[RMDB]
RNA sequence: GGGAACGACUCGAGUAGAGUCGAAAAACACAAUUCUAUGGAUUGAUGAAUUGAUGCAGGUUGCUCCAUCCCCUACAAAGUAUCCGUUCCAUUUACGCGCACUUAUGACGCGUGGGCGUAGUAAAGAACCAUUACAACUCUUCGGAGUUGUAAUGGUAAAAGAAACAACAACAACAAC
Reactivity to DMS in 0.01 (KOAc 150mM, MgCl2 10mM, bicine 150mM(pH8.5), 24C), signal-to-noise 4, nucleotides 027 to 126: a070c040a100c020a010a030u000u000c010u000a200u020g000g010a060u010u010g020a130u020g000a030a040u000u010g000a080u010g020c090a080g000g000u000u010g020c050u000c030c020a090u000c010c020c020c110u000a090c160a060a050a100g020u000a040u000c030c000g010u020u000c000c010a130u010u010u000a010c020g010c010g000c010a040c030u000u000a110u000g030a100c200g010c160g030u000g010g010g020c020g010u000a030g020u000a040a060a070g000a110
Reactivity to 2A3 in 0.01 (KOAc 150mM, MgCl2 10mM, bicine 150mM(pH8.5), 24C), signal-to-noise 2, nucleotides 027 to 126: a010c000a000c000a030a060u030u000c010u090a080u160g080g020a060u060u100g020a020u060g020a060a060u020u050g040a020u040g080c010a020g090g050u110u150g030c030u000c020c000a070u050c010c010c000c020u000a020c050a030a100a000g070u040a040u030c020c000g000u040u010c020c000a060u030u010u030a010c000g050c020g040c010a010c020u120u070a110u300g170a080c080g000c000g050u000g000g050g000c020g000u060a050g040u000a040a000a060g030a020